[RMDB]
RNA sequence: GGGAACGACUCGAGUAGAGUCGAAAAUGCCUGAGUUGACAGCGCAGGACAUUGCGCAUGCCUUAGCGCUCACCCCAGCGGGGUUGGGGCGUGAGGUACUGGAAGCGUGCUGGUGGCCGGAUGGCGCAGCGUUGCGGCGUGGCCCCUUGCGCGAUGCCGUAGGAAUGUGGUUCGCCACAUUCCUACGAAAAGAAACAACAACAACAAC
Reactivity to DMS in 0.01 (KOAc 150mM, MgCl2 10mM, bicine 150mM(pH8.5), 24C), signal-to-noise 1, nucleotides 027 to 156: u010g010c000c010u010g010a060g020u000u000g040a090c070a150g010c020g000c010a100g000g000a110c050a070u010u030g030c030g050c010a170u010g030c000c000u010u000a040g000c040g010c000u000c010a150c000c000c030c030a280g030c160g040g040g040g020u000u000g030g020g020g010c000g070u020g000a060g020g020u000a030c100u010g020g030a010a130g000c010g000u000g040c050u000g000g030u010g030g000c030c000g050g000a140u000g020g040c000g060c040a040g000c190g010u010u000g020c020g020g000c020g010u020g020g000c000c000c010c030u000u000g020c000g000c070g020a050u010g020c060
Reactivity to 2A3 in 0.01 (KOAc 150mM, MgCl2 10mM, bicine 150mM(pH8.5), 24C), signal-to-noise 1, nucleotides 027 to 156: u200g060c000c000u030g010a000g050u010u120g170a110c030a050g020c010g020c070a060g020g070a140c070a090u100u160g020c030g000c000a000u020g000c000c000u000u050a110g030c000g000c010u000c000a000c010c000c040c020a120g150c170g120g000g000g020u020u140g080g000g000g000c000g000u010g000a000g010g010u000a070c050u070g030g050a150a000g070c000g020u030g000c030u030g000g040u060g030g070c010c050g110g110a230u190g110g000c080g000c010a030g110c170g220u300u170g010c020g030g030c030g050u020g010g000c030c000c000c000u000u150g000c020g000c050g010a030u060g000c010